[RMDB]
RNA sequence: GGGAACGACUCGAGUAGAGUCGAAAAGGUCUUACGUCAGCCAUGAGAACAACGGUAACUCUCAUGGUUGUGACAGAGAUGUCACGACGCUGACCAUCUAAGUUACCGCUUGUUAGAUGGUAAGACAAUUUAGGGCUAUGUUCGCAUAGCCCUAAAUAAAAGAAACAACAACAACAAC
Reactivity to 2A3 in 0.01 (KOAc 150mM, MgCl2 10mM, bicine 150mM(pH8.5), 24C), signal-to-noise 3, nucleotides 027 to 126: g070g000u000c010u040u090a070c090g010u020c020a020g030c040c000a030u030g070a060g020a260a010c010a000a010c010g020g010u020a010a000c000u010c010u020c050a030u070g020g000u020u070g010u000g000a000c010a000g030a000g020a040u020g000u010c000a010c020g140a080c100g050c290u130g030a040c040c010a040u040c020u090a040a010g000u010u010a010c020c020g020c150u020u020g000u000u010a030g010a030u020g040g010u050a130a010g010a020c020a020
Reactivity to DMS in 0.01 (KOAc 150mM, MgCl2 10mM, bicine 150mM(pH8.5), 24C), signal-to-noise 6, nucleotides 027 to 126: g030g020u000c010u000u000a050c110g010u010c040a300g010c040c020a060u000g020a230g000a030a030c020a030a020c020g000g000u010a020a020c020u010c060u000c100a010u010g000g000u000u010g010u000g010a020c020a010g010a230g000a180u000g000u000c020a010c010g010a080c220g020c290u010g010a030c090c020a010u000c110u000a020a030g000u000u000a010c000c010g010c240u000u000g010u000u010a040g010a020u000g020g010u000a030a040g000a030c020a140